[RMDB]
The record gives the reactivity of an RNA of 177 nucleotides to DMS and 2A3.
DMS adducts were read by reverse transcription with MarathonRT.
The reactions ran in a buffer of 150 mM KOAc, 10 mM MgCl2 and 150 mM bicine (pH 8.5), at 24 C.
RNA sequence: GGGAACGACUCGAGUAGAGUCGAAAAGUGGCGGUCGAUUAUGGAUACAGACCGCUGCACACGAAGCACCGAGCACGAUGCUAGACGGACUUCAUCAGUCCCGAAUUGGAGAGAAGCACUUAAUGCAAGUGAGUUUGCUGUUCGCAGCAGACUCACUAAAAGAAACAACAACAACAAC
Reactivity to DMS in 0.01 (KOAc 150mM, MgCl2 10mM, bicine 150mM(pH8.5), 24C), signal-to-noise 9, nucleotides 027 to 126: g020u000g010g030c000g000g010u000c000g010a130u030u020a300u010g010g020a130u060a130c220a220g010a000c000c000g040c000u010g010c010a090c160a100c140g000a030a050g000c010a060c020c010g000a070g000c040a160c210g010a110u030g000c020u010a060g000a300c160g000g010a270c000u010u020c080a120u020c140a120g010u000c000c000c010g010a100a100u030u010g000g000a070g010a080g000a070a070g010c040a060c140u010u030a070a080u020g010c090a100
Reactivity to 2A3 in 0.01 (KOAc 150mM, MgCl2 10mM, bicine 150mM(pH8.5), 24C), signal-to-noise 9, nucleotides 027 to 126: g010u010g000g000c010g010g030u010c020g020a070u100u100a150u300g220g030a070u100a190c060a040g000a000c000c000g000c000u000g000c000a030c000a010c040g030a020a010g010c020a050c080c010g000a010g010c020a030c150g190a070u250g010c020u030a030g040a040c030g010g010a020c000u030u010c020a070u080c030a020g060u030c000c000c010g020a100a130u140u120g040g010a050g010a020g010a120a000g020c030a020c060u110u160a120a030u200g040c060a060